Structure probing data (2A3) for a 177-nucleotide construct. For 2A3 the reverse transcriptase was SuperScript II with manganese. Reactivities are rounded to 0.1 and cut off at 0 and 3. The reactions ran in a buffer of 150 mM KOAc, 10 mM MgCl2 and 150 mM bicine (pH 8.5), at 24 C.
RNA sequence: GGGAACGACUCGAGUAGAGUCGAAAACUGUGAGGCUUCGGCCUCACAGAUAGGUUUGUUUUUAGUGAUUUUUCCAAACCCCUUUGUGCAAAAAUCAUUAAACUCGCGUACGUUUCGACGUACGCAACUCUAGCCUCUUCUUCGGAAGAGGCUAGAGAAAAGAAACAACAACAACAAC
Reactivity to 2A3 in 0.01 (KOAc 150mM, MgCl2 10mM, bicine 150mM(pH8.5), 24C), signal-to-noise 1, nucleotides 027 to 126: c000u000g000u020g010a000g010g010c040u020u090c300g140g000c040c000u010c000a010c000a000g010a010u060a030g050g000u000u000u000g010u030u010u010u000u000a010g000u000g020a030u000u020u010u000u000c020c000a010a010a030c040c020c000c000u030u160u190g080u050g030c030a000a000a000a000a000u010c010a000u010u030a030a030a010c100u100c120g000c000g010u000a000c000g000u040u040u120c250g050a000c000g000u010a000c000g000c000a000a000